RNA sequence: GGGAACGACUCGAGUAGAGUCGAAAACAGAUGCCGUUCGCGGCAUCUGAAAGUGACGGUGAAAAAUGGCCAAGGUGCCAGCUACCACCGACACAGGCCGCAAAAGAGGAUUCUUCGGAAUCCUCAAGAAAGCAAGUAUGUUCGCAUACUUGCUUUCAAAAGAAACAACAACAACAAC
Reactivity to DMS in 0.01 (KOAc 150mM, MgCl2 10mM, bicine 150mM(pH8.5), 24C), signal-to-noise 3, nucleotides 027 to 126: c000a020g000a010u000g010c010c000g030u010u010c170g030c010g010g010c000a010u000c000u010g010a010a050a110g000u000g010a110c000g000g010u000g000a020a060a050a180a110u000g000g000c000c020a200a150g020g010u000g000c000c000a000g000c190u010a210c190c010a010c000c010g010a070c000a000c010a070g020g010c000c020g010c220a050a080a120a110g010a010g000g000a000u000u000c000u000u010c160g020g000a010a000u000c000c000u000c000a020a030
Reactivity to 2A3 in 0.01 (KOAc 150mM, MgCl2 10mM, bicine 150mM(pH8.5), 24C), signal-to-noise 2, nucleotides 027 to 126: c000a000g000a010u000g000c010c030g020u060u070c290g020c010g110g000c000a010u010c000u000g010a020a010a000g000u000g010a010c000g010g000u020g060a000a000a000a040a080u030g000g000c030c060a240a260g220g070u300g010c010c010a010g020c020u030a050c010c010a000c000c000g020a000c000a000c000a010g100g090c000c010g070c100a060a070a050a070g010a000g010g000a000u010u010c010u030u050c120g010g000a000a000u000c000c000u000c000a000a010